[RMDB]
RNA sequence: GGGAACGACUCGAGUAGAGUCGAAAAGAUAUGGAACGGUAGAUGAGCAACAGCUCGGAAACGAGACAUGCUCGCUAUUCGUUCCUAAGUCAAAACUACAAUAAGGAGUUCGCUCCUUAUUGUAGAACAGUAAUGGGUAGUUCGCUACCCAUUACUGAAAAGAAACAACAACAACAAC
Reactivity to 2A3 in 0.01 (KOAc 150mM, MgCl2 10mM, bicine 150mM(pH8.5), 24C), signal-to-noise 7, nucleotides 027 to 126: g000a010u070a040u140g000g000a000a010c010g020g000u020a010g050a300u160g000a030g010c010a010a170c060a160g040c010u010c010g010g030a070a050a030c010g000a000g010a020c040a050u090g000c000u010c010g000c000u010a020u190u300c010g000u010u000c000c000u000a070a000g020u000c020a000a000a100a130c010u020a000c000a010a010u010a010a000g000g010a000g010u070u150c220g110c120u000c000c000u000u000a000u000u000g000u000a000g000a000a000
Reactivity to DMS in 0.01 (KOAc 150mM, MgCl2 10mM, bicine 150mM(pH8.5), 24C), signal-to-noise 7, nucleotides 027 to 126: g000a030u010a300u010g000g000a000a000c000g000g000u000a000g000a100u010g010a010g010c010a030a090c300a170g000c000u010c000g000g000a080a070a180c010g000a020g010a030c090a220u000g010c010u000c000g000c010u000a000u000u010c000g020u000u000c000c000u000a020a090g010u010c030a070a060a090a180c010u010a000c000a000a010u000a010a000g000g010a010g020u000u010c260g020c000u000c000c000u000u000a000u000u000g010u000a000g000a060a110